[RMDB]
Structure probing data (2A3 and DMS) for a 207-nucleotide construct.
Source: RMDB library OK3TST, as collected in RNAgym.
The reactions ran in a buffer of 150 mM KOAc, 10 mM MgCl2 and 150 mM bicine (pH 8.5), at 24 C.

RNA sequence: GGGAACGACUCGAGUAGAGUCGAAAAGCCAGGGUGGUGCAGGCUAUAGCUGCCAUCGGCUGACCUAGAGAAGACACAUCAGCUGAUCCUUUGGACCCGUUGACUUGAGACAGAAGUUCUGGGCUUCUCCUCCUGCGGCCUAGCUCUGAGACAAUGAGGUAGCUACCAUAUUCGUAUGGUAGCUACCAAAAGAAACAACAACAACAAC
Reactivity to 2A3 in 0.01 (KOAc 150mM, MgCl2 10mM, bicine 150mM(pH8.5), 24C), signal-to-noise 1, nucleotides 027 to 156: g060c010c010a000g070g020g000u210g000g080u240g120c110a020g140g000c060u220a190u110a300g060c060u050g040c020c030a010u000c030g070g000c000u010g020a130c010c060u050a060g040a010g000a190a030g110a000c090a000c020a170u050c000a010g000c010u010g000a050u070c000c030u150u150u090g000g090a070c000c030c000g030u080u070g010a040c060u030u020g000a060g010a070c000a000g090a090a010g050u030u140c050u000g050g020g000c000u040u010c010u080c010c030u060c000c000u020g030c060g010g030c000c000u000a020g000c000u020c000u010g070a060g010a110c040a010a100u100g000a010
Reactivity to DMS in 0.01 (KOAc 150mM, MgCl2 10mM, bicine 150mM(pH8.5), 24C), signal-to-noise 2, nucleotides 027 to 156: g020c030c020a070g000g020g030u010g000g060u000g010c020a040g070g080c080u000a120u000a150g020c020u020g030c010c060a130u010c020g040g000c000u000g000a030c010c000u000a070g010a110g000a100a130g020a100c120a130c060a130u000c010a060g000c020u000g000a010u000c000c020u000u000u010g020g000a040c040c020c040g040u020u000g020a080c090u000u000g010a170g010a300c040a120g030a120a130g000u010u000c060u010g020g050g010c010u040u010c020u000c010c030u000c040c000u010g040c120g000g010c000c010u000a080g010c040u000c020u010g000a140g010a150c040a100a110u000g000a220